[RMDB]
RNA sequence: GGGAACGACUCGAGUAGAGUCGAAAAGCAGAUGUCCAUUACGCGAAUGCCUGUGCUUUUCGACGUUUAGUUUAGUCUGCAAGAUAGAAUUGAUGUCUCGAAGACAGGUACAUCAGCUUUUAGAGUUAUGCUUAAUUCUAUUCGUAGAAUUAAGCAUAAAAGAAACAACAACAACAAC
Reactivity to DMS in 0.01 (KOAc 150mM, MgCl2 10mM, bicine 150mM(pH8.5), 24C), signal-to-noise 9, nucleotides 027 to 126: g010c010a050g020a020u000g000u010c060c030a150u020u030a120c260g010c130g020a090a140u020g010c020c020u000g000u010g020c010u000u000u000u010c150g000a020c000g010u000u000u020a020g010u000u000u000a260g010u000c000u000g010c220a120a070g000a030u000a280g000a020a030u000u010g010a010u000g000u000c000u000c120g000a040a030g000a040c040a020g000g010u000a140c030a010u000c010a050g010c030u000u000u000u010a120g010a140g010u010u000
Reactivity to 2A3 in 0.01 (KOAc 150mM, MgCl2 10mM, bicine 150mM(pH8.5), 24C), signal-to-noise 9, nucleotides 027 to 126: g010c020a010g010a060u040g050u030c040c020a080u160u220a100c130g050c060g100a100a040u120g010c000c010u080g040u260g140c010u060u030u010u020c020g020a030c020g030u020u050u080a030g010u000u020u020a060g010u010c040u080g190c090a060a050g020a030u110a040g070a030a030u030u030g010a010u020g020u010c010u010c070g020a030a010g030a020c020a010g000g010u010a010c000a010u010c020a020g010c020u030u040u030u100a090g010a030g080u030u010

Source information: An RNA of 177 nucleotides, treated with DMS and 2A3 and read out base by base. The RNA was probed in 150 mM KOAc, 10 mM MgCl2 and 150 mM bicine (pH 8.5) at 24 C. For 2A3 the reverse transcriptase was SuperScript II with manganese.